[RMDB]
RNA sequence: GGGAACGACUCGAGUAGAGUCGAAAAAGCGCAAGUGGAACUCGGGGAAGUCGACGAACUUGCCGUCGCGCCGACGGUGUCCGCGGGACGGAGCGAGUACUGCGAUGCCGCACAUUUCAAGCAGGCGUCAGGCUUAUUGUUUCGACAAUAAGCCUGAAAAAGAAACAACAACAACAAC
Reactivity to DMS in 0.01 (KOAc 150mM, MgCl2 10mM, bicine 150mM(pH8.5), 24C), signal-to-noise 4, nucleotides 027 to 126: a110g020c080g010c020a100a140g030u000g000g010a060a040c080u010c040g000g020g010g000a120a070g010u000c020g010a100c100g000a070a040c030u010u000g010c030c010g020u000c020g000c040g020c040c150g010a030c010g010g030u010g010u000c020c230g020c030g000g000g000a050c020g000g000a120g010c050g000a030g020u000a110c050u000g000c050g000a080u010g010c030c020g000c040a080c130a110u000u000u000c090a090a100g000c060a090g010g000c070g010
Reactivity to 2A3 in 0.01 (KOAc 150mM, MgCl2 10mM, bicine 150mM(pH8.5), 24C), signal-to-noise 3, nucleotides 027 to 126: a000g070c070g010c040a080a020g030u040g040g040a010a050c010u010c040g010g000g010g190a050a030g050u070c030g070a220c030g010a150a040c030u000u060g030c020c010g000u000c030g030c010g020c030c020g020a030c070g110g170u160g020u060c000c010g010c000g050g000g000a020c020g010g000a030g130c040g010a000g020u020a050c030u030g000c020g050a060u110g060c030c020g080c020a040c000a090u080u170u090c050a090a030g010c040a070g070g030c040g010